[RMDB]
RNA sequence: GGGAACGACUCGAGUAGAGUCGAAAAAAAGAUAUGGAGGCAGGGAGCUCCUGGAUGGCGUUGAAAGAGGCUCGGAAACGAGCCUCUGGAGCCAUAGAGGGAGCGAAGAACUGCCUCCUAAGUCAAAGAUUCACAAGUAGUUCGCUACUUGUGAAUCAAAAGAAACAACAACAACAAC
Reactivity to DMS in 0.01 (KOAc 150mM, MgCl2 10mM, bicine 150mM(pH8.5), 24C), signal-to-noise 2, nucleotides 027 to 126: a060a060a070g010a020u000a300u010g000g000a020g010g010c010a000g000g000g030a160g010c010u000c000c000u000g020g010a080u000g000g000c000g000u010u000g020a160a140a010g000a010g020g020c000u000c000g010g000a160a090a270c020g000a010g010c000c000u000c000u000g000g000a070g000c010c000a020u000a060g020a290g000g020g000a020g030c010g000a070a100g010a120a210c030u000g000c020c000u000c000c000u000a010a090g000u000c020a160a130a090